[RMDB]
RNA sequence: GGGAACGACUCGAGUAGAGUCGAAAAAAUGGGAUUACAAAUUAGGCAUUAUACGGUUCAGUCUUUAAAACUGUUGAAAACACAUUUUAAUGUUGAGGUUUAGUAAAGAAGGACUAAAUUGAUGAUGUAUCAUUACUUAUUUCGAUAAGUAAUGAUAAAAAGAAACAACAACAACAAC
Reactivity to 2A3 in 0.01 (KOAc 150mM, MgCl2 10mM, bicine 150mM(pH8.5), 24C), signal-to-noise 9, nucleotides 027 to 126: a000a010u220g040g010g040a080u150u110a100c080a040a070a050u110u060a110g070g000c020a010u010u050a050u060a090c040g010g030u010u010c010a080g070u000c040u010u040u050a020a060a020a010c010u030g190u300u060g160a040a030a030a000c070a010c010a040u080u100u140u240a180a120u080g020u030u020g040a120g020g030u010u020u040a070g050u070a040a080a060g050a030a020g050g010a010c000u040a070a090a100u110u080g020a040u020g010a020u090g040
Reactivity to DMS in 0.01 (KOAc 150mM, MgCl2 10mM, bicine 150mM(pH8.5), 24C), signal-to-noise 9, nucleotides 027 to 126: a050a040u020g010g000g010a120u020u020a060c090a060a060a080u020u020a090g010g010c020a020u010u010a040u010a090c180g010g000u000u000c010a050g010u000c010u000u000u000a040a060a030a020c040u000g010u020u030g000a050a070a040a040c060a030c140a070u010u030u030u020a070a120u000g010u010u000g010a080g000g010u000u000u000a060g020u010a020a030a050g010a080a060g000g000a020c020u010a030a050a060u010u010g010a050u010g000a050u010g020
Annotation
This 177-nucleotide RNA was probed chemically with 2A3 and DMS. Reactivities are given for positions 27 through 126. For DMS, 36,875 sequencing reads were counted. 2A3 adducts were read by reverse transcription with SuperScript II with manganese. DMS adducts were read by reverse transcription with MarathonRT. Conditions: 150 mM KOAc, 10 mM MgCl2 and 150 mM bicine (pH 8.5), 24 C. It was measured as part of the RMDB library OK1LIB.